[RMDB]
Structure probing data (DMS and 2A3) for a 177-nucleotide construct.

RNA sequence: GGGAACGACUCGAGUAGAGUCGAAAAGUGACCUUCGGGCUCGCGUCGGUGCGCGCCUGGUUCGACGAUUCGAGCGCGUUGAUCCGCGCGAGCAGAUAGCGGCCGGCGUCGCCGAGCACAGCCGUCAACGGUGAUGAUUAUUCGUAAUCAUCACCGUAAAAGAAACAACAACAACAAC
Reactivity to DMS in 0.01 (KOAc 150mM, MgCl2 10mM, bicine 150mM(pH8.5), 24C), signal-to-noise 6, nucleotides 027 to 126: g010u000g010a200c020c030u000u010c090g010g010g010c010u000c040g000c020g010u010c030g030g000u000g010c080g010c020g000c010c020u010g030g010u000u000c030g020a140c170g000a110u000u000c020g010a140g000c010g000c000g000u010u010g020a090u010c090c020g000c010g010c020g000a060g000c060a040g000a050u010a110g000c020g010g010c010c020g000g010c030g020u010c100g010c020c010g010a100g010c050a070c080a100g020c020c030g020u000c090a130
Reactivity to 2A3 in 0.01 (KOAc 150mM, MgCl2 10mM, bicine 150mM(pH8.5), 24C), signal-to-noise 5, nucleotides 027 to 126: g050u060g120a100c000c000u030u060c150g080g100g020c010u000c010g010c010g150u140c030g020g000u020g010c070g000c010g030c010c020u030g020g010u090u180c090g180a200c100g020a080u110u060c020g030a020g040c010g000c010g020u020u100g110a070u090c010c010g000c010g000c000g010a010g000c000a010g010a030u050a030g010c020g010g000c010c020g000g010c030g110u110c070g000c030c010g030a020g000c040a030c020a070g000c010c030g060u060c020a030

For DMS the reverse transcriptase was MarathonRT.